The record gives the reactivity of an RNA of 177 nucleotides to 2A3 and DMS. For DMS, 5,997 sequencing reads were counted.
RNA sequence: GGGAACGACUCGAGUAGAGUCGAAAACUCAUUCACGGUUAAGUCUGUCUCUGGCAGAGCAGACUGUCAGGAGGAAGAGGUCACCAUCUUCACGAAGCCAAAGCCAAAUUCCGCCUUGUCCUGUAAACAUGACUGCGUAUUUCGAUACGCAGUCAUGAAAAGAAACAACAACAACAAC
Reactivity to 2A3 in 0.01 (KOAc 150mM, MgCl2 10mM, bicine 150mM(pH8.5), 24C), signal-to-noise 3, nucleotides 027 to 126: c000u000c000a100u120u100c070a080c090g050g030u040u190a050a000g010u010c000u000g130u080c010u000c020u040g180g000c100a020g010a020g030c010a000g000a010c000u000g000u000c010a030g050g070a050g000g030a060a000g020a010g050g020u070c000a040c050c030a060u020c010u060u070c050a050c090g040a050a000g010c000c030a050a010a010g010c020c000a060a050a060u050u010c000c010g010c000c000u020u040g070u010c010c000u060g030u160a030a070a010
Reactivity to DMS in 0.01 (KOAc 150mM, MgCl2 10mM, bicine 150mM(pH8.5), 24C), signal-to-noise 4, nucleotides 027 to 126: c010u000c000a120u040u050c070a070c110g010g000u000u000a070a050g000u000c000u000g010u050c000u010c010u000g040g000c060a090g020a020g000c020a020g010a020c010u010g000u010c060a070g040g020a090g010g010a100a050g020a060g010g040u030c050a110c080c050a090u020c040u020u000c040a060c060g000a100a110g010c040c040a050a170a130g000c060c060a030a110a150u000u020c040c050g010c020c020u000u000g000u000c020c010u000g010u020a040a080a150
Annotation
The RNA was probed in 150 mM KOAc, 10 mM MgCl2 and 150 mM bicine (pH 8.5) at 24 C. 2A3 adducts were read by reverse transcription with SuperScript II with manganese.